[RMDB]
The record gives the reactivity of an RNA of 177 nucleotides to 2A3 and DMS. For 2A3, 6,968 sequencing reads were counted. 2A3 adducts were read by reverse transcription with SuperScript II with manganese. The DMS profile rests on 19,585 reads. The RNA was probed in 150 mM KOAc, 10 mM MgCl2 and 150 mM bicine (pH 8.5) at 24 C.
RNA sequence: GGGAACGACUCGAGUAGAGUCGAAAAUUUGUCUAAAGCUCAAGUAGCUCCUUUUGCUUUGAUUUUCUUCAUCUGUUGCUAUCUCCGCUGCAGGCUACGUUAUGCUGCCCUUUUAGGGUUUGUGCCCCAAGUACAGUCUUUUCGAAGACUGUACUUGAAAAGAAACAACAACAACAAC
Reactivity to 2A3 in 0.01 (KOAc 150mM, MgCl2 10mM, bicine 150mM(pH8.5), 24C), signal-to-noise 4, nucleotides 027 to 126: u020u010u080g010u000c030u050a090a020a020g000c010u010c050a050a040g030u030a030g070c010u090c010c020u080u070u040u060g010c030u070u060u060g050a070u080u070u080u030c030u050u030c010a080u000c040u060g070u070u030g030c010u020a060u100c030u020c050c030g020c010u020g000c010a030g020g010c010u030a020c040g020u050u030a050u170g020c000u020g030c000c000c000u060u120u040u130a050g000g000g010u070u120u080g060u060g050c000c000c000
Reactivity to DMS in 0.01 (KOAc 150mM, MgCl2 10mM, bicine 150mM(pH8.5), 24C), signal-to-noise 7, nucleotides 027 to 126: u010u010u000g010u000c030u010a060a110a080g010c020u010c050a050a070g010u010a090g010c090u010c100c020u000u000u000u000g010c040u000u000u000g010a090u000u000u000u000c050u000u000c070a060u010c060u000g020u000u010g010c050u000a070u000c040u000c050c070g010c050u000g010c120a080g000g000c050u010a040c100g010u010u000a070u000g000c040u000g000c010c010c020u000u010u000u000a090g010g010g010u000u000u010g010u010g000c010c000c030